Description: This 207-nucleotide RNA was probed chemically with DMS and 2A3. 2A3 adducts were read by reverse transcription with SuperScript II with manganese.
RNA sequence: GGGAACGACUCGAGUAGAGUCGAAAACUCCUAGUUCGCUAGGAGAAAAAUCCUAAGUCACGCUAUCUGCUUAAGGGAGGCAUGUCGGAAACGACAUGCCGAAGAACUUAAGAACUACAGACGCGUGAUAUGGAAAAAAGCACUAUUCGUAGUGCAAUGUUCCUUAGUUAUUCGUAACUAAGGAACAAAAAGAAACAACAACAACAAC
Reactivity to DMS in 0.01 (KOAc 150mM, MgCl2 10mM, bicine 150mM(pH8.5), 24C), signal-to-noise 2, nucleotides 027 to 156: c020u000c000c000u020a030g020u000u000c270g070c020u010a010g010g010a040g010a000a050a130a130a090u000c000c000u000a070a220g010u010c000a010c000g000c000u000a120u000c010u000g000c000u000u000a030a050g000g010g020a220g030g020c000a010u000g010u020c000g030g020a200a070a280c020g030a030c000a000u000g000c000c000g000a030a120g020a230a170c030u000u000a030a100g020a110a210c020u000a200c010a010g010a020c180g000c000g040u000g010a000u000a130u000g000g020a020a050a030a080a090a130g000c000a010c010u000a050u030u000c250g010u000a010g030u010g000c030a080a120
Reactivity to 2A3 in 0.01 (KOAc 150mM, MgCl2 10mM, bicine 150mM(pH8.5), 24C), signal-to-noise 4, nucleotides 027 to 156: c010u000c010c000u020a020g010u040u030c150g020c140u010a010g010g030a030g020a100a030a010a020a010u050c030c000u070a160a030g020u000c000a010c010g000c010u040a080u150c000u000g000c000u010u000a000a000g000g010g000a020g010g000c010a000u000g000u000c010g040g030a080a070a080c000g000a000c000a000u000g000c010c000g000a000a020g010a000a000c000u010u000a010a000g000a040a050c090u240a050c150a000g010a000c020g000c000g000u000g000a000u000a030u020g020g000a000a050a020a060a050a040g050c070a010c010u040a030u120u150c260g090u110a010g000u000g000c020a010a050
The RNA was probed in 150 mM KOAc, 10 mM MgCl2 and 150 mM bicine (pH 8.5) at 24 C.